Chemical mapping of a 177-nucleotide RNA with 2A3 and DMS.
RNA sequence: GGGAACGACUCGAGUAGAGUCGAAAACUGCGAAGGCGGUACCACCGACCAGACUCAGGGACAACAGGAGUAUCGAGGAAUACUUCAUAGAGAGUUUCUCUCUGUGGGGAUGACGGCUGCGAUGCUGCAUGGUGGAGGAAUUCGUUCCUCCACCAUGAAAAGAAACAACAACAACAAC
Reactivity to 2A3 in 0.01 (KOAc 150mM, MgCl2 10mM, bicine 150mM(pH8.5), 24C), signal-to-noise 9, nucleotides 027 to 126: c030u040g020c040g060a070a030g080g000c020g010g020u080a130c010c030a030c010c040g060a110c010c010a020g040a090c020u020c080a020g020g030g030a030c030a110a020c020a130g030g030a010g050u030a030u060c030g030a050g020g090a080a040u080a180c000u000u020c000a010u030a000g020a000g010a020g060u060u210u090c050u000c000u000c000u010g000u010g000g010g000g010a010u080g050a020c030g050g010c000u050g020c030g020a030u080g020c020u020g000
Reactivity to DMS in 0.01 (KOAc 150mM, MgCl2 10mM, bicine 150mM(pH8.5), 24C), signal-to-noise 7, nucleotides 027 to 126: c030u000g000c050g000a140a090g010g000c020g000g010u010a090c090c070a060c040c030g000a100c030c030a080g000a130c070u010c050a080g010g000g000a100c110a090a090c110a080g000g000a040g010u000a020u010c020g020a110g010g000a130a080u020a110c010u010u000c000a020u010a010g000a020g000a040g000u030u010u030c030u000c000u000c000u000g020u000g010g000g000g000a080u010g000a150c130g000g000c040u020g000c050g000a030u020g000c020u000g010
For 2A3 the reverse transcriptase was SuperScript II with manganese.